Structure probing data (DMS and 2A3) for a 177-nucleotide construct. Conditions: 150 mM KOAc, 10 mM MgCl2 and 150 mM bicine (pH 8.5), 24 C.

RNA sequence: GGGAACGACUCGAGUAGAGUCGAAAAUUCGCACGAUCCGCCACCGGUCUGGGAGGGCUUGGCGGCGGGUCAUUCAAGGGAGAACCACCGAUGGAGAAUGCUCUUCUCGUCGGACUGUCACGGCAGGUCCCUUUCUUCCUUUCGAGGAAGAAAGGGAAAAAGAAACAACAACAACAAC
Reactivity to DMS in 0.01 (KOAc 150mM, MgCl2 10mM, bicine 150mM(pH8.5), 24C), signal-to-noise 3, nucleotides 027 to 126: u000u010c010g020c110a080c250g010a000u000c030c000g020c010c010a080c010c010g020g000u000c000u000g020g090g000a160g000g000g020c010u000u010g050g000c040g010g030c010g000g010g010u000c010a030u010u040c100a120a110g020g000g000a050g000a080a170c080c060a220c050c000g000a060u040g040g000a020g010a040a020u040g000c270u010c080u000u000c010u000c000g010u040c010g020g000a110c070u020g000u000c050a120c150g020g000c030a010g000g000
Reactivity to 2A3 in 0.01 (KOAc 150mM, MgCl2 10mM, bicine 150mM(pH8.5), 24C), signal-to-noise 6, nucleotides 027 to 126: u040u010c020g030c060a070c080g000a000u010c000c000g000c010c000a010c010c000g000g000u010c010u050g030g090g040a130g070g010g000c040u180u300g020g000c000g000g010c010g000g010g000u000c000a000u010u050c010a020a060g050g000g000a080g030a080a050c020c010a030c010c010g000a010u070g240g000a020g010a000a050u260g040c030u050c020u180u000c010u000c010g020u010c000g000g020a020c010u040g030u030c030a020c110g080g020c010a010g020g020